[RMDB]
RNA sequence: GGGAACGACUCGAGUAGAGUCGAAAAAAAAAAGGGGUCUGGCGAGGAUCUACAAUGAAGCGCGGAGCUCAACAGCUGUGUCUGAAGCCUCCACGGACACAGACAUGAGCUCCUGAAUGUCAAAGUGUAGGGAGCCAGACGGAGGCACCCAAAAAAAUCGAUUAAUAUGGUUCGCCAUAUUAAUCGAAAAAGAAACAACAACAACAAC
Reactivity to 2A3 in 0.01 (KOAc 150mM, MgCl2 10mM, bicine 150mM(pH8.5), 24C), signal-to-noise 1, nucleotides 027 to 156: a010a010a010a010a010a110g020g000g040g000u040c000u010g000g010c030g070a210g000g000a000u000c000u000a010c010a080a120u120g080a180a060g100c090g040c030g150g000a000g000c000u010c030a020a130c060a150g000c000u000g000u000g000u000c010u010g040a110a050g000c010c000u000c000c010a050c000g000g000a000c000a000c000a000g050a010c040a210u120g000a020g000c000u020c000c000u060g040a150a090u220g110u210c070a110a000a090g030u030g010u020a010g010g000g000a030g000c000c000a000g000a000c030g000g000a000g030g000c020a010c000c000c040a010a110a040a020a020a110a060
Conditions: 150 mM KOAc, 10 mM MgCl2 and 150 mM bicine (pH 8.5), 24 C.
Structure probing data (2A3) for a 207-nucleotide construct.